[RMDB]
RNA sequence: GGGAACGACUCGAGUAGAGUCGAAAAUUUGAGCAACGUGCUGCAACGAGUGCAUUGAAAAAGCGCAUGAUUGACGGAGGAUUUACGAGAAGCACACAUGUGCCAGUAUUGUUUGAAGCAGCUGAAGAAGAGUCCAAAAUUUCGAUUUUGGACUCUUAAAAGAAACAACAACAACAAC
Reactivity to DMS in 0.01 (KOAc 150mM, MgCl2 10mM, bicine 150mM(pH8.5), 24C), signal-to-noise 7, nucleotides 027 to 126: u010u030u010g010a110g010c040a070a070c050g010u010g010c010u000g000c020a080a140c040g010a110g000u020g000c030a110u020u020g010a050a050a090a090a100g000c010g010c010a000u000g010a110u020u010g000a110c020g020g000a210g020g000a150u020u030u010a100c090g000a180g010a160a110g000c040a020c110a070c070a030u020g000u000g010c020c070a090g000u000a100u010u010g000u000u000u020g030a050a290g010c020a020g020c010u020g010a120a150g000
Reactivity to 2A3 in 0.01 (KOAc 150mM, MgCl2 10mM, bicine 150mM(pH8.5), 24C), signal-to-noise 3, nucleotides 027 to 126: u120u060u160g080a080g010c020a000a090c080g090u160g000c010u010g000c000a050a060c080g030a030g120u100g060c050a060u080u120g110a100a060a020a060a000g010c000g010c010a040u020g080a200u020u090g060a100c030g000g060a100g070g020a180u100u160u170a090c030g040a070g030a120a000g010c060a000c000a010c000a040u110g000u010g030c010c020a000g070u130a120u050u080g090u040u040u020g040a060a020g000c030a000g000c030u050g010a030a030g060
An RNA of 177 nucleotides, treated with DMS and 2A3 and read out base by base. It was measured as part of the RMDB library OK1LIB. 2A3 adducts were read by reverse transcription with SuperScript II with manganese. 2A3 is a SHAPE reagent: it acylates the 2'-hydroxyl of flexible nucleotides of all four kinds. For 2A3, 1,227 sequencing reads were counted.